Structure probing data (DMS and 2A3) for a 177-nucleotide construct. For 2A3 the reverse transcriptase was SuperScript II with manganese. The data come from the RNA Mapping Database (RMDB), library M2PK90. The RNA was probed in 150 mM KOAc, 10 mM MgCl2 and 150 mM bicine (pH 8.5) at 24 C.
[RMDB]
RNA sequence: GGGAACGACUCGAGUAGAGUCGAAAAUAAAAAUCCCAGCUGCCAUACCCACCAUCGACAGGAGUAUGAACGUGGCCACUGACACAACUACUACAGUCAAAGUGGGAUACAGCUCAUAACACAAAAACAUAACAUGUGGAUUCGUCCACAUGUUAUGAAAAGAAACAACAACAACAAC
Reactivity to DMS in 0.01 (KOAc 150mM, MgCl2 10mM, bicine 150mM(pH8.5), 24C), signal-to-noise 3, nucleotides 027 to 126: u010a040a090a090a130a090u000c000c000c020a000g050c030u000g010c060c060a110u020a090c020c000c000a010c020c050a150u000c260g020a050c030a050g000g000a050g010u000a000u000g000a040a100c190g010u000g000g010c020c150a100c200u000g000a060c080a010c040a090a170c030u000a000c050u010a080c030a030g030u000c010a030a290a150g010u000g000g020g040a080u000a030c030a020g030c010u000c120a080u010a060a040c120a040c140a030a100a060a040a160
Reactivity to 2A3 in 0.01 (KOAc 150mM, MgCl2 10mM, bicine 150mM(pH8.5), 24C), signal-to-noise 2, nucleotides 027 to 126: u120a010a100a030a000a010u020c000c000c000a000g010c000u010g030c110c070a110u150a300c020c010c010a000c020c000a070u130c060g030a010c010a030g060g040a010g020u020a050u250g100a130a030c100g000u000g030g000c050c040a180c170u140g080a020c010a010c000a090a030c020u040a000c000u050a030c040a020g020u000c010a060a040a010g000u010g000g000g010a010u020a020c010a000g020c010u030c080a160u160a160a040c080a000c020a050a130a040a060a000